[RMDB]
RNA sequence: GGGAACGACUCGAGUAGAGUCGAAAAGCACGGGUAACACCGUGAUCCAGUAGGUUGGCAUUCUGUUCGGGUGGAAGCUCGGGUGAGAACUCGAGUGGACCGAGUGGAAAAGAAAAUCCUGGCCAUAUCACGUGAGUAAAUUCGUUUACUCACGUGAAAAAGAAACAACAACAACAAC
Reactivity to 2A3 in 0.01 (KOAc 150mM, MgCl2 10mM, bicine 150mM(pH8.5), 24C), signal-to-noise 9, nucleotides 027 to 126: g040c000a000c000g010g000g010u030a050a020c030a010c040c000g000u000g000a010u020c000c000a020g040u080a080g070g040u010u020g040g040c070a030u010u000c000u010g030u010u000c010g010g030g030u300g120g030a010a000g000c000u000c000g010g010g000u020g030a090g010a030a010c000u000c000g000a000g000u020g010g010a010c000c000g000a000g000u020g020g030a010a030a020a030g060a010a060a000a010u020c000c000u010g010g000c020c010a050u060a050
Reactivity to DMS in 0.01 (KOAc 150mM, MgCl2 10mM, bicine 150mM(pH8.5), 24C), signal-to-noise 6, nucleotides 027 to 126: g010c000a010c010g000g000g010u010a130a130c160a190c010c000g010u000g000a010u010c000c010a020g010u000a080g010g020u000u010g010g020c250a100u000u000c010u000g010u000u000c010g000g000g010u000g030g000a120a220g000c000u000c010g000g000g000u000g000a260g000a150a020c000u010c000g000a020g000u000g000g000a040c000c010g000a010g030u000g000g000a010a010a050a070g000a080a050a020a030u000c020c000u000g000g000c030c020a100u020a110